[RMDB]
RNA sequence: GGGAACGACUCGAGUAGAGUCGAAAAUGCCGCCAGACCAGCACUGCACUUGAGAGCCAAGUGCCCUCUCCUGAGCCCCCAAGCCCUGGCACCAGUUCUUGCCGUGCCCCUUCCCCAGGGUGUGUGGUCGGUAGUCAAGUUUCGACUUGACUACCGAAAAAGAAACAACAACAACAAC
Reactivity to DMS in 0.01 (KOAc 150mM, MgCl2 10mM, bicine 150mM(pH8.5), 24C), signal-to-noise 1, nucleotides 027 to 126: u010g010c000c010g060c040c040a100g010a090c060c050a090g020c060a110c100u000g000c020a030c020u010u000g020a140g020a180g010c190c010a040a050g010u000g000c010c070c000u010c010u010c030c010u000g010a120g000c020c000c020c020c020a030a150g000c060c030c000u000g010g010c030a100c070c040a140g000u000u010c030u000u000g000c020c000g020u010g000c010c010c010c030u000u000c050c010c010c070a100g020g000g040u000g030u000g030u010g000g020
The data come from the RNA Mapping Database (RMDB), library OK2TRN. The record gives the reactivity of an RNA of 177 nucleotides to DMS. For DMS, 1,492 sequencing reads were counted. Reactivities are given for positions 27 through 126.